[RMDB]
The record gives the reactivity of an RNA of 177 nucleotides to DMS.
It was measured as part of the RMDB library M2PK90.
RNA sequence: GGGAACGACUCGAGUAGAGUCGAAAAUUAUAUAGGGUGUGCAAGACGCUGAACUUGCCAUGAUCUGGAACUUUAGUGCUGAGGUCCGAGUUCCAGAUCAUCAUUUCGGACCUCAGCACUAAUAUAACAGUACAUGCUUGUUCGCAAGCAUGUACUGAAAAGAAACAACAACAACAAC
Reactivity to DMS in 0.01 (KOAc 150mM, MgCl2 10mM, bicine 150mM(pH8.5), 24C), signal-to-noise 1, nucleotides 027 to 126: u010u000a080u000a150u000a100g000g020g040u000g000u010g030c020a020a040g010a050c050g020c180u000g000a080a080c040u000u000g000c010c020a080u000g000a070u000c030u000g000g000a100a180c190u000u000u000a010g020u010g000c020u000g010a020g010g010u000c020c020g000a040g030u000u010c060c070a050g010a060u000c110a030u000c060a080u000u000u010c010g030g000a020c000c000u000c000a000g000c000a000c000u000a000a010u000a060u010a100a210